Chemical mapping of a 177-nucleotide RNA with DMS and 2A3. Reactivities are rounded to 0.1 and cut off at 0 and 3. Conditions: 150 mM KOAc, 10 mM MgCl2 and 150 mM bicine (pH 8.5), 24 C.
RNA sequence: GGGAACGACUCGAGUAGAGUCGAAAAGAUAUGGAAAAGCGAUAAGCUGGUGUCGGAAACGACACCCAGCUUUUGACGCUUACUUCCUAAGUCAAAACUAACUUUUCUGUUCGCAGAAAAGUUAGAACUUGUAUCCUUGGUUCGCCAAGGAUACAAGAAAAGAAACAACAACAACAAC
Reactivity to DMS in 0.01 (KOAc 150mM, MgCl2 10mM, bicine 150mM(pH8.5), 24C), signal-to-noise 3, nucleotides 027 to 126: g000a050u000a300u010g000g010a040a050a040a020g010c000g020a110u010a030a010g020c000u000g000g020u000g010u000c020g010g000a070a040a140c000g020a010c000a010c150c080c040a000g000c000u000u000u010u020g010a160c070g000c000u000u000a080c250u000u000c000c000u000a050a150g010u010c050a060a100a130a210c000u000a000a010c000u010u000u000u000c000u000g000u010u010c270g010c020a010g010a010a010a030a010g000u000u000a000g000a040a150
Reactivity to 2A3 in 0.01 (KOAc 150mM, MgCl2 10mM, bicine 150mM(pH8.5), 24C), signal-to-noise 1, nucleotides 027 to 126: g010a030u050a030u080g000g000a020a090a000a030g000c010g070a110u060a200a070g000c020u010g010g000u000g000u010c010g000g050a150a030a050c030g000a010c020a010c010c000c000a000g000c000u030u070u070u080g130a040c030g000c010u000u020a110c050u010u000c010c000u030a130a030g080u060c050a020a030a100a180c020u010a000a000c000u020u010u010u000c010u000g070u030u070c170g070c120a000g000a000a010a000a010g000u000u000a000g000a010a020